[RMDB]
RNA sequence: GGGAACGACUCGAGUAGAGUCGAAAAUCAUCGUGGAAACCCGUGGUGAUGCUCAGAUGGUUCUGGAUCGUCUGUUCGAACACAUUGAUCGCUACAACGCGGUCUCCGUAUCAUAUUACUACGAGCUUGUUGGUAUCACCGGCACGUUCACUGACCAUGAUAACGAAUGAUUCGUCAUUCGUUAUCAAAAAGAAACAACAACAACAAC
Reactivity to 2A3 in 0.01 (KOAc 150mM, MgCl2 10mM, bicine 150mM(pH8.5), 24C), signal-to-noise 9, nucleotides 027 to 156: u080c020a020u040c020g020u030g030g040a090a080a070c030c010c020g030u050g010g000u010g000a030u030g000c010u020c060a030g010a060u040g020g040u080u040c080u190g110g030a050u040c030g070u010c100u090g040u040u060c060g050a110a020c060a010c030a150u060u140g010a010u010c010g020c020u130a140c120a210a030c170g000c010g000g010u000c000u010c010c020g030u070a040u080c060a070u060a100u220u160a070c080u020a030c050g020a010g040c040u070u060g030u040u050g060g010u040a020u080c020a010c030c030g010g000c020a020c020g020u050u050c050a040c090u050g070a060c050c000a060
Reactivity to DMS in 0.01 (KOAc 150mM, MgCl2 10mM, bicine 150mM(pH8.5), 24C), signal-to-noise 4, nucleotides 027 to 156: u000c050a030u000c060g020u000g020g000a070a070a050c030c000c030g020u000g030g030u000g020a040u000g020c050u000c040a090g010a040u000g010g020u000u000c100u010g040g020a040u000c040g020u010c020u000g010u000u010c060g020a070a060c070a060c060a090u000u010g000a050u000c030g040c020u010a120c210a100a130c120g020c020g010g000u000c000u000c110c020g010u000a070u000c060a120u000a090u010u000a070c040u000a050c030g010a070g010c050u000u000g000u000u000g010g020u000a080u000c050a220c040c000g010g030c020a070c060g030u000u010c060a070c040u000g000a150c050c030a270